[RMDB]
RNA sequence: GGGAACGACUCGAGUAGAGUCGAAAAGAUAUGGAUCACAACGGGAGCUGACACAUCGGAAACGAUGUGCAGCAUCGAUCGUUAAGUGAUCCUAAGUCAAAGCCUUAGAGUGUUCGCACUCUAAGGCCGUAUAAGGUCGGUUCGCCGACCUUAUACGAAAAGAAACAACAACAACAAC
Reactivity to 2A3 in 0.01 (KOAc 150mM, MgCl2 10mM, bicine 150mM(pH8.5), 24C), signal-to-noise 5, nucleotides 027 to 126: g020a000u040a010u090g000g010a000u010c000a000c010a000a030c010g020g010g030a060g020c010u010g120a210c000a000c000a000u000c010g010g040a030a020a010c000g000a000u000g000u010g010c000a000g010c000a010u100c010g010a030u010c010g000u020u070a300a170g010u000g010a010u000c000c000u000a020a000g010u010c070a190a140a020g000c000c000u000u000a010g000a000g000u050g080u110u290c300g050c130a000c000u000c000u000a000a000g010g000c000
Reactivity to DMS in 0.01 (KOAc 150mM, MgCl2 10mM, bicine 150mM(pH8.5), 24C), signal-to-noise 6, nucleotides 027 to 126: g000a030u000a240u000g000g000a020u000c000a030c030a060a010c000g010g000g010a060g030c000u000g000a210c000a000c000a000u000c000g010g010a060a070a110c000g020a010u000g010u000g010c010a010g000c000a140u010c210g010a050u010c010g010u010u010a120a120g020u000g000a000u000c000c000u000a010a090g010u000c020a130a110a130g000c000c000u000u010a010g000a020g040u000g020u000u010c240g020c010a020c000u000c000u000a000a000g000g020c000
Chemical mapping of a 177-nucleotide RNA with 2A3 and DMS. 2A3 adducts were read by reverse transcription with SuperScript II with manganese. For DMS the reverse transcriptase was MarathonRT. The reactions ran in a buffer of 150 mM KOAc, 10 mM MgCl2 and 150 mM bicine (pH 8.5), at 24 C.